[RMDB]
RNA sequence: GGGAACGACUCGAGUAGAGUCGAAAACAUAUGCAUUUUAACACAUCAACUAUAACACCUUUAUUUAAGUCUGUUGUGGACCAUAGAAUAUGGUAAAUUACAACAAGCAAAAUAAAGUUAUAUAUGCCGGCCAAUAAGCAUUCGUGCUUAUUGGCCGAAAAGAAACAACAACAACAAC
Reactivity to 2A3 in 0.01 (KOAc 150mM, MgCl2 10mM, bicine 150mM(pH8.5), 24C), signal-to-noise 3, nucleotides 027 to 126: c000a030u130a010u130g030c090a080u000u030u070u300a180a040c110a000c030a100u040c030a210a110c060u040a050u030a100a040c040a120c090c000u000u020u010a030u000u000u000a010a020g050u000c030u010g060u000u000g000u010g020g100a020c000c000a000u010a070g300a300a200u220a040u110g000g010u080a070a090a070u100u070a010c000a000a010c000a010a010g010c000a000a100a050a000u000a010a010a010g000u090u000a120u000a000u000a020u110g060c020
Source information:
This 177-nucleotide RNA was probed chemically with 2A3. For 2A3, 864 sequencing reads were counted. 2A3 adducts were read by reverse transcription with SuperScript II with manganese. It was measured as part of the RMDB library RFM100. Reactivities are rounded to 0.1 and cut off at 0 and 3. Values cover nucleotides 27 to 126.